Chemical mapping of a 207-nucleotide RNA with DMS and 2A3. For 2A3, 3,213 sequencing reads were counted. It was measured as part of the RMDB library OK3TST. For DMS, 12,024 sequencing reads were counted.
RNA sequence: GGGAACGACUCGAGUAGAGUCGAAAAGCAGCCAGGAGCAUGAUGUCUCUAAAAGGACCCUUUCAUCACCACUCAUGUAUCCUGUUUUUGUACUUUUUCAUUUCUAGAAAACAUAUGACGUAGUAUUUACUGAGUUACUGGAAGUCCUUUGGAAUCAAUUAAUACGCCUAUUCGUAGGCGUAUUAAUAAAAGAAACAACAACAACAAC
Reactivity to DMS in 0.01 (KOAc 150mM, MgCl2 10mM, bicine 150mM(pH8.5), 24C), signal-to-noise 4, nucleotides 027 to 156: g030c040a100g050c190c030a060g010g010a120g030c030a050u000g020a070u000g000u000c030u000c040u000a040a040a080a090g010g020a120c110c100c050u000u000u000c030a060u000c030a080c040c050a080c020u000c010a030u000g010u000a130u000c050c020u000g010u010u010u000u000u000g010u000a030c030u020u010u010u000u010c050a140u000u000u010c050u010a130g000a070a050a050a080c060a100u000a080u000g000a060c090g010u000a060g000u000a090u000u000u000a070c030u010g000a090g020u000u000a100c050u000g010g010a050a070g010u000c010c010u010u000u000g020g000a130a090u000c060a080
Reactivity to 2A3 in 0.01 (KOAc 150mM, MgCl2 10mM, bicine 150mM(pH8.5), 24C), signal-to-noise 6, nucleotides 027 to 156: g020c030a010g030c010c010a030g010g020a020g020c010a020u030g020a030u120g080u060c050u020c050u170a060a060a010a050g070g010a090c070c030c000u040u130u080c110a180u110c020a020c080c000a040c020u020c010a010u060g020u050a300u060c020c030u030g120u010u050u010u050u050g020u040a060c020u030u050u040u030u080c030a100u070u070u100c070u090a040g060a040a130a030a010c030a050u140a060u180g050a010c030g020u050a020g050u030a130u110u170u050a060c050u040g040a010g080u050u060a020c030u030g010g020a050a020g040u020c020c010u050u040u050g040g030a050a050u150c030a010